[RMDB]
RNA sequence: GGGAACGACUCGAGUAGAGUCGAAAAGAAGAUGGGGAGCUCAGAUCUACGAGAAGCACCAACGAGUAUGGCUCGGGACUUUCAACGAGCAAGAAGAAGCUGCUCGUUCCUACGACAUCGCAGCUUGGUCUUCUCAAAGCUUCGGCUUUGAGAAGACAAAAGAAACAACAACAACAAC
Reactivity to 2A3 in 0.01 (KOAc 150mM, MgCl2 10mM, bicine 150mM(pH8.5), 24C), signal-to-noise 1, nucleotides 027 to 126: g080a000a000g050a070u150g000g000g010g010a050g000c020u020c030a050g020a140u010c030u140a070c080g010a020g000a170a060g030c040a020c030c000a020a050c000g020a000g020u090a030u090g050g000c090u000c000g040g000g020a030c070u190u210u100c130a060a030c000g000a000g030c070a040a020g070a020a000g100a020a000g020c050u010g000c000u010c040g060u040u120c040c000u130a070c020g030a030c000a060u140c100g000c100a030g020c000u050u000g050
Reactivity to DMS in 0.01 (KOAc 150mM, MgCl2 10mM, bicine 150mM(pH8.5), 24C), signal-to-noise 2, nucleotides 027 to 126: g000a070a040g000a130u000g000g000g020g010a100g020c040u000c040a080g000a110u010c050u000a080c260g010a060g000a070a090g010c140a080c060c050a060a130c080g020a100g010u010a020u010g010g010c020u000c020g010g000g010a130c240u000u010u010c140a060a070c000g000a030g010c040a070a030g000a110a060g030a090a060g020c050u000g020c000u020c030g000u020u000c030c030u000a130c080g000a050c030a050u010c020g010c040a080g010c080u000u000g000